[RMDB]
Chemical mapping of a 177-nucleotide RNA with DMS.
Values cover nucleotides 27 to 126.
Conditions: 150 mM KOAc, 10 mM MgCl2 and 150 mM bicine (pH 8.5), 24 C.
RNA sequence: GGGAACGACUCGAGUAGAGUCGAAAAGAUAUGGAUGACCUUGAAGCUGCCUAAAGAUUUGGAGACCGUAAGUCGGAAACGACUUCGGUCUAUGAAGAAUCUUUAGGCAGUGGAGUCAUCCUAAGUCCAGUAUGGAGUGGUUCGCCACUCCAUACUGAAAAGAAACAACAACAACAAC
Reactivity to DMS in 0.01 (KOAc 150mM, MgCl2 10mM, bicine 150mM(pH8.5), 24C), signal-to-noise 1, nucleotides 027 to 126: g010a100u010a300u010g010g000a010u000g000a020c030c300u010u020g010a170a200g000c000u010g000c000c000u000a010a000a030g010a030u000u000u000g000g000a030g010a000c000c010g000u000a000a000g030u010c010g000g000a160a080a200c000g050a020c000u000u000c010g000g010u010c010u000a000u040g010a150a300g000a000a000u000c000u000u000u000a010g010g020c000a010g000u010g000g010a040g020u010c000a000u000c000c000u000a000a110g000u010c050

Values are in units of 0.01, from 0 to 300, in steps of 10.